[RMDB]
RNA sequence: GGGAACGACUCGAGUAGAGUCGAAAAUAUCGGAUGAGAAGGCGUAGGAAUCAUAUCAUUCCUGCUAAUUGGAUGAUGACACGGACGAACAGACGCCAACACAGCUGCACUACAAGCAAUCCUAUACAACCGCAUCGGAGACAUUGGAUUUGUCCUAGUAGGGACCAUUGUUCGCAAUGGUCCCUACAAAAGAAACAACAACAACAAC
Reactivity to 2A3 in 0.01 (KOAc 150mM, MgCl2 10mM, bicine 150mM(pH8.5), 24C), signal-to-noise 1, nucleotides 027 to 156: u250a090u120c010g160g000a000u090g000a050g020a000a090g030g000c000g000u000a000g030g030a000a080u010c010a080u120a050u070c010a040u120u160c000c020u010g100c030u060a170a120u070u040g000g020a020u000g000a000u030g030a030c010a000c200g060g020a030c000g020a010a010c000a040g070a010c040g000c000c000a080a000c210a020c080a050g000c000u030g060c050a020c080u130a090c080a180a020g000c000a000a040u020c000c000u050a030u060a130c090a060a000c040c000g000c040a080u080c030g000g000a010g010a080c030a020u070u120g020g000a080u020u060u110g040u030c000c000u020a050
Source: RMDB library PDB130, as collected in RNAgym. Structure probing data (2A3) for a 207-nucleotide construct. The RNA was probed in 150 mM KOAc, 10 mM MgCl2 and 150 mM bicine (pH 8.5) at 24 C. 2A3 adducts were read by reverse transcription with SuperScript II with manganese. For 2A3, 418 sequencing reads were counted.